Structure probing data (DMS and 2A3) for a 177-nucleotide construct.
[RMDB]
RNA sequence: GGGAACGACUCGAGUAGAGUCGAAAACGUGAACAUCGCUCUGCUAAGUCCCGUCGUUCUUCCAGUCAGAGCGAGAUUGUAAGCAACCUUAUGCGCAAUGAAGACAUAGAGGGACUUCUCCAACAAGCAUCCUCACGGAUUUCGAUCCGUGAGGAUGAAAAGAAACAACAACAACAAC
Reactivity to DMS in 0.01 (KOAc 150mM, MgCl2 10mM, bicine 150mM(pH8.5), 24C), signal-to-noise 2, nucleotides 027 to 126: c170g000u000g020a150a090c150a060u010c020g000c010u010c020u000g000c140u020a050a020g000u010c040c010c040g010u000c070g030u000u010c000u000u030c000c050a080g020u040c030a010g000a000g000c000g000a000g010a040u020u010g020u000a110a190g010c040a070a180c200c050u000u030a070u000g020c000g010c040a000a090u000g010a150a080g000a140c070a120u060a100g010a050g040g010g000a090c050u000u020c020u000c000c090a020a130c300a020a100g000
Reactivity to 2A3 in 0.01 (KOAc 150mM, MgCl2 10mM, bicine 150mM(pH8.5), 24C), signal-to-noise 4, nucleotides 027 to 126: c050g070u110g150a040a000c020a070u010c010g000c000u020c010u000g040c050u100a050a000g040u060c080c010c010g050u040c020g000u030u030c000u160u020c010c000a040g100u130c000a000g030a000g020c050g010a020g020a020u040u080g040u110a140a020g020c000a030a080c010c030u100u160a070u110g000c030g000c010a020a100u120g040a130a010g020a020c060a060u150a030g090a070g030g000g000a000c000u030u020c040u000c020c010a080a090c010a050a040g010
The DMS profile rests on 2,204 reads.
Source: RMDB library OK1LIB, as collected in RNAgym.
DMS (dimethyl sulfate) methylates the pairing face of unpaired adenines and cytosines.